[RMDB]
RNA sequence: GGGAACGACUCGAGUAGAGUCGAAAAUGGCGAGCUGACCUGUUUCAAGAUGGCAGGUGUGGAUGGGACUCUGUCCAGGGCUGGCCCCACACACCCACAUUCUGAUGACGCAGAGGUCAUGGGACUGUGCCAGGGCCCCCAGACUACAUCCACUGGACAUAUCCGCCUAGUUCGCUAGGCGGAUAUGAAAAGAAACAACAACAACAAC
Reactivity to 2A3 in 0.01 (KOAc 150mM, MgCl2 10mM, bicine 150mM(pH8.5), 24C), signal-to-noise 2, nucleotides 027 to 156: u080g040g000c020g020a020g000c010u030g040a060c010c010u010g060u010u120u120c160a100a060g070a170u140g040g000c010a010g040g000u030g000u000g070g020a050u020g040g000g060a080c070u060c120u210g020u000c040c070a150g000g070g000c140u090g000g000c010c010c040c000a010c010a000c000a000c000c020c000a070c000a100u170u020c040u120g110a200u110g030a060c060g000c180a060g050a060g100g070u060c070a030u050g010g000g030a060c140u060g010u010g080c100c080a050g010g010g000c000c000c000c000c000a020g020a040c050u060a010c030a030u020c010c020a020c030u020g030g000a000
Reactivity to DMS in 0.01 (KOAc 150mM, MgCl2 10mM, bicine 150mM(pH8.5), 24C), signal-to-noise 1, nucleotides 027 to 156: u010g010g020c060g000a120g020c080u010g020a090c030c020u010g040u020u000u000c050a150a130g010a130u000g010g050c020a020g000g020u000g010u020g000g020a010u000g010g020g000a060c010u010c100u010g020u000c030c010a120g030g020g000c080u010g030g040c040c000c000c070a050c060a080c060a090c010c000c020a060c040a180u010u000c030u000g000a070u010g040a170c300g030c090a180g000a200g030g000u000c040a090u000g010g020g000a060c020u010g020u010g010c000c020a000g030g020g000c000c010c010c010c010a040g000a060c020u000a060c000a070u000c000c010a040c020u000g040g040a290
Source: RMDB library OK3TST, as collected in RNAgym.
Chemical mapping of a 207-nucleotide RNA with 2A3 and DMS.
Values cover nucleotides 27 to 156.
Conditions: 150 mM KOAc, 10 mM MgCl2 and 150 mM bicine (pH 8.5), 24 C.
For DMS, 2,465 sequencing reads were counted.